[RMDB]
RNA sequence: GGGAACGACUCGAGUAGAGUCGAAAAGAUAUGGAAAGGAAGGGUAUAAGCCCUCAGACAUGAGAGCCAGUCGGAAACGACUGUGUUCUCAACAGCUGAUGGCUUAUACCCUUCCUUUCCUAAGUCAGGUAGUAUGUACGUUCGCGUACAUACUACCAAAAGAAACAACAACAACAAC
Reactivity to DMS in 0.01 (KOAc 150mM, MgCl2 10mM, bicine 150mM(pH8.5), 24C), signal-to-noise 2, nucleotides 027 to 126: g010a050u010a300u010g000g010a020a020a020g000g010a040a030g000g000g030u000a000u000a000a000g020c010c000c070u000c000a020g000a030c140a280u040g000a020g000a000g010c000c020a030g010u010c000g010g010a210a140a270c010g040a000c010u050g000u000g000u000u000c000u000c010a030a070c300a120g000c010u000g000a000u000g020g010c010u000u000a000u000a000c000c000c000u000u020c000c000u000u000u000c000c000u010a020a060g010u000c040a150